Description:
This 177-nucleotide RNA was probed chemically with 2A3 and DMS.
RNA sequence: GGGAACGACUCGAGUAGAGUCGAAAAAAUGUCUUCGCAAGUGGCAAAAGCUGCAACUCAGGGGGAGCUCCUCGAAGCUCUGUACGGAGAGGUCACCGUGCAGGAGCUGCAAGAGACAAAUCUCGGGUCAGUCACGUUGAUUCGUCAACGUGACUGAAAAAGAAACAACAACAACAAC
Reactivity to 2A3 in 0.01 (KOAc 150mM, MgCl2 10mM, bicine 150mM(pH8.5), 24C), signal-to-noise 3, nucleotides 027 to 126: a000a020u140g020u050c040u120u090c020g000c080a100a000g010u040g040g000c040a010a090a080a150g080c070u080g000c010a040a100c070u020c120a070g050g020g000g020g100a050g010c050u030c010c020u000c060g050a040a000g020c010u000c010u010g020u020a000c040g010g000a120g000a050g190g120u120c070a050c080c000g010u000g000c000a030g100g100a020g020c000u020g000c000a060a020g030a000g030a100c040a030a130a090u020c010u040c000g070g000g030
Reactivity to DMS in 0.01 (KOAc 150mM, MgCl2 10mM, bicine 150mM(pH8.5), 24C), signal-to-noise 2, nucleotides 027 to 126: a080a040u000g000u000c000u000u000c060g000c100a040a090g010u000g010g000c050a060a120a090a190g020c050u010g030c010a100a020c080u000c060a030g000g030g000g060g000a140g000c110u000c030c010u000c130g080a090a020g000c060u000c010u000g000u000a000c000g000g020a150g010a180g000g010u010c130a160c000c050g040u000g000c000a000g030g000a000g010c000u030g000c120a060a130g020a120g010a080c130a010a120a150u000c030u000c000g020g020g000
The DMS profile rests on 1,715 reads.
The 2A3 profile rests on 1,607 reads.
The RNA was probed in 150 mM KOAc, 10 mM MgCl2 and 150 mM bicine (pH 8.5) at 24 C.